[RMDB]
Source information:
Conditions: 150 mM KOAc, 10 mM MgCl2 and 150 mM bicine (pH 8.5), 24 C. This 177-nucleotide RNA was probed chemically with 2A3 and DMS. The 2A3 profile rests on 10,321 reads. The DMS profile rests on 5,493 reads.
RNA sequence: GGGAACGACUCGAGUAGAGUCGAAAAGAUAUGGAUCGCAACAGAGCCACAUUCGGAAACGAAUGAAUGGCGACGAAGUUGACGAUCCUAAGUCAAAUCACUCCCUGCGUUCGCGCAGGGAGUGAAACAUAGCUUUAGACUUCGGUCUAAAGCUAUGAAAAGAAACAACAACAACAAC
Reactivity to 2A3 in 0.01 (KOAc 150mM, MgCl2 10mM, bicine 150mM(pH8.5), 24C), signal-to-noise 3, nucleotides 027 to 126: g000a010u010a020u040g000g000a010u000c000g020c010a000a010c000a030g010a000g010c000c010a020c010a010u010u000c000g000g000a010a000a000c020g010a020a000u060g060a240a300u170g000g020c030g250a080c020g010a010a020g000u020u010g130a210c000g000a000u000c010c000u000a000a000g000u000c030a000a070a190u050c000a000c000u010c010c000c000u030g000c000g030u050u080c300g000c010g000c200a020g010g000g000a000g010u000g000a000a000a000
Reactivity to DMS in 0.01 (KOAc 150mM, MgCl2 10mM, bicine 150mM(pH8.5), 24C), signal-to-noise 3, nucleotides 027 to 126: g000a010u000a030u010g010g010a000u000c000g030c000a020a010c000a010g000a060g040c000c010a120c000a020u000u000c000g020g000a000a000a040c000g000a020a000u000g010a140a210u010g000g010c000g000a140c300g000a090a110g000u000u000g010a110c000g010a010u000c010c000u010a000a060g020u000c010a100a150a210u000c010a010c000u000c000c000c000u010g020c010g010u000u020c250g020c010g050c000a000g020g000g000a000g000u000g000a010a070a170

Annotation:
Values cover nucleotides 27 to 126.